Annotation: Structure probing data (2A3) for a 207-nucleotide construct. The RNA was probed in 150 mM KOAc, 10 mM MgCl2 and 150 mM bicine (pH 8.5) at 24 C. The data come from the RNA Mapping Database (RMDB), library M2RFPK. Values cover nucleotides 27 to 156. For 2A3 the reverse transcriptase was SuperScript II with manganese.
[RMDB]
RNA sequence: GGGAACGACUCGAGUAGAGUCGAAAAAGCAGGACCGCUUUACGACGCGGUCCUGCAGCAAUGAGUAGAAGCGGUCAAAUUUGGUGUCGAGUUCCAACAAACCAAAUUCGGGCAUUGCUCACUGCAAAAAACUCUCUUUAGUUCGCUAAAGAGAGAAGUAGUAUAGGGGGUUCGCCCCCUAUACUACAAAAGAAACAACAACAACAAC
Reactivity to 2A3 in 0.01 (KOAc 150mM, MgCl2 10mM, bicine 150mM(pH8.5), 24C), signal-to-noise 1, nucleotides 027 to 156: a000g010c000a000g010g000a000c000c000g050c140u150u130u160a280c270g090a030c000g030c000g000g000u000c000c000u000g010c000a000g000c000a000a060u020g010a000g020u080a090g030a230a010g070c050g030g030u030c040a010a020a020u030u000u000g000g000u030g050u180c110g150a100g040u030u300c080c060a080a070c000a040a160a000c000c000a000a000a030u070u000c050g000g010g010c000a000u000u060g000c000u000c000a000c000u050g000c070a000a150a000a000a000a080c000u020c000u000c000u000u000u000a000g020u030u010c260g000c150u000a000a000a000g000a000g000a010g000a040a060